[RMDB]
RNA sequence: GGGAACGACUCGAGUAGAGUCGAAAAGUAUACAUUCGAAUGUCUCGUGGUAAUCUUAAUCGAGAAUUUAUAAACAAUAUCGUUGAUGAAAUUAAACCACUAUUACUGGUCGAGCUUAAAGCAGAACUUAAAGCAGAGCUUAAAGCAGAGCUUAAAGCUGUAUUUAUGAAUUCGUUCAUAAAUACAGAAAAGAAACAACAACAACAAC
Reactivity to DMS in 0.01 (KOAc 150mM, MgCl2 10mM, bicine 150mM(pH8.5), 24C), signal-to-noise 3, nucleotides 027 to 156: g010u010a100u020a070c050a100u000u030c080g020a130a070u010g040u000c010u000c040g000u000g030g070u000a130a070u000c090u010u000a130a170u000c010g020a060g010a090a080u000u000u000a250u010a160a090a160c050a070a110u000a080u000c050g020u010u010g040a130u000g000a100a070a040u000u020a090a090a090c040c010a020c050u000a110u000u000a110c060u010g020g020u000c000g000a130g010c020u010u000a080a070a120g010c020a080g000a100a300c070u000u000a030a040a090g020c020a150g010a110g010c030u010u000a020a050a100g030c030a050g000a100g010c010u000u000a030a050a120g000
Reactivity to 2A3 in 0.01 (KOAc 150mM, MgCl2 10mM, bicine 150mM(pH8.5), 24C), signal-to-noise 4, nucleotides 027 to 156: g050u060a060u080a160c080a070u090u160c070g050a140a050u090g050u090c020u010c080g020u020g020g010u050a060a080u030c070u130u150a060a060u100c070g020a010g000a070a020u030u100u010a170u100a070a090a020c030a020a060u050a030u120c030g000u030u090g020a030u060g010a070a050a010u080u110a070a150a010c010c000a010c020u060a060u190u080a080c050u040g080g010u020c030g010a010g020c010u060u070a080a070a030g000c010a020g030a090a060c030u050u050a140a030a010g000c010a000g030a030g050c000u000u140a020a020a000g000c020a020g020a010g060c000u040u060a070a080a000g000

The record gives the reactivity of an RNA of 207 nucleotides to DMS and 2A3. For DMS the reverse transcriptase was MarathonRT. For DMS, 3,333 sequencing reads were counted. It was measured as part of the RMDB library OK3TST. The RNA was probed in 150 mM KOAc, 10 mM MgCl2 and 150 mM bicine (pH 8.5) at 24 C.